[RMDB]
RNA sequence: GGGAACGACUCGAGUAGAGUCGAAAAUACUUAGUACGCGCGUAGUUGCAGGCAUUCCGGGUGCAGAAACUGACGCGGAAGACUUUUCCCAGAGUGUGCGCUUCAACUGGCGUGCUGAGUAGUGCACGAAUUGCACGUACGUUCGCGUACGUGCAAAAGGUAAAUGCUACUUCGGUAGCAUUUACCUAAAAGAAACAACAACAACAAC
Reactivity to DMS in 0.01 (KOAc 150mM, MgCl2 10mM, bicine 150mM(pH8.5), 24C), signal-to-noise 2, nucleotides 027 to 156: u000a030c030u010u010a030g050u020a050c020g000c030g060c110g020u000a080g060u000u000g010c080a110g030g010c020a110u010u000c010c110g000g000g070u000g000c070a120g000a070a110a080c060u010g030a100c120g050c030g000g010a080a130g010a140c080u000u000u000u010c020c000c010a250g010a070g010u010g000u000g020c090g030c000u010u000c020a070a090c050u000g020g020c020g020u000g020c000u020g010a040g010u000a100g010u030g010c030a090c060g010a070a150u000u000g000c000a020c000g000u000a010c010g000u000u000c250g050c040g000u010a000c000g050u000g000c000a000a010a060
Reactivity to 2A3 in 0.01 (KOAc 150mM, MgCl2 10mM, bicine 150mM(pH8.5), 24C), signal-to-noise 3, nucleotides 027 to 156: u050a000c010u000u010a000g000u010a010c000g060c000g040c080g250u150a020g030u020u020g000c050a050g020g000c010a010u030u020c020c050g130g020g000u060g090c060a060g100a100a160a050c060u070g070a040c040g030c050g250g030a010a010g100a060c000u110u120u070u090c010c000c000a010g000a000g020u050g000u030g030c110g000c080u030u020c020a060a060c020u020g030g020c000g000u000g020c000u000g000a000g000u050a060g050u050g070c030a020c120g080a100a100u050u000g000c010a000c010g000u010a000c000g010u020u040c090g000c010g110u000a010c030g000u000g040c000a000a000a010